RNA sequence: GGGAACGACUCGAGUAGAGUCGAAAAGAAAGAGAGGUUGGCCGUUUUCCUCGAACUGUGUUUUUUUCACUGUGAAAGAAGCGGACUAAAAAUACGCUCACUGUCCGUGAGUGAACGGCGAAAGAAACCCAACUAAAUAGUUCGCUAUUUAGUUGGGAAAAGAAACAACAACAACAAC
Reactivity to DMS in 0.01 (KOAc 150mM, MgCl2 10mM, bicine 150mM(pH8.5), 24C), signal-to-noise 8, nucleotides 027 to 126: g010a070a090a080g010a180g000a060g010g000u000u010g000g000c000c000g000u000u000u020u010c120c010u000c030g010a110a070c070u010g000u010g010u000u010u000u010u000u000u000c010a140c170u040g020u030g000a040a030a030g010a040a050g000c000g010g010a090c120u010a010a060a050a080a070u030a120c080g010c030u000c020a010c030u020g010u050c170c070g010u010g000a030g010u000g000a030a010c010g000g010c010g010a120a070a070g010a100a110a100
Reactivity to 2A3 in 0.01 (KOAc 150mM, MgCl2 10mM, bicine 150mM(pH8.5), 24C), signal-to-noise 9, nucleotides 027 to 126: g110a020a080a000g120a000g010a000g020g020u020u020g110g000c010c000g000u010u010u060u040c010c000u010c010g010a030a010c020u020g020u000g110u080u010u030u010u010u070u080c070a080c100u160g070u100g200a040a040a060g050a030a000g030c010g000g030a010c060u110a020a070a030a010a010u190a060c050g000c020u020c020a020c020u090g070u100c030c050g010u010g010a020g020u030g020a000a000c000g000g010c040g030a050a120a010g070a010a040a010